[RMDB]
RNA sequence: GGGAACGACUCGAGUAGAGUCGAAAAUACACCUCCACUCCGGUGGAGAUCGUAUCGGUGGGAUGUGAGAGGGAGGAGACCAUCAUCCGGAAGGACCCAUGGAAAAGAUCCUAGUCCUCGAUUUCGGAUCUUAAGUGCGAUUCGUCGCACUUAAGAUAAAAGAAACAACAACAACAAC
Reactivity to 2A3 in 0.01 (KOAc 150mM, MgCl2 10mM, bicine 150mM(pH8.5), 24C), signal-to-noise 2, nucleotides 027 to 126: u010a010c010a010c010c000u020c000c010a010c020u010c040c190g110g000u010g010g010a020g030a030u070c090g020u030a010u050c060g020g050u090g020g070g010a110u080g080u080g130a080g000a040g090g010g030a090g050g040a040g000a020c010c020a030u080c010a020u010c020c020g110g000a050a040g060g000a040c010c030c050a010u080g020g020a040a090a060a040g100a040u000c000c000u000a010g030u010c000c000u050c040g070a120u020u030u080c050g000g010
Reactivity to DMS in 0.01 (KOAc 150mM, MgCl2 10mM, bicine 150mM(pH8.5), 24C), signal-to-noise 4, nucleotides 027 to 126: u000a040c050a080c040c010u000c000c010a000c000u000c230c170g030g020u010g000g020a010g010a000u000c140g020u000a030u000c110g000g010u000g000g000g010a090u000g010u010g010a090g020a100g010g020g010a070g010g010a070g000a100c050c060a050u000c100a130u010c030c020g010g010a100a050g010g020a060c050c100c110a130u000g010g000a030a070a080a130g000a130u000c000c000u000a090g000u010c010c000u010c100g000a190u000u000u000c040g000g000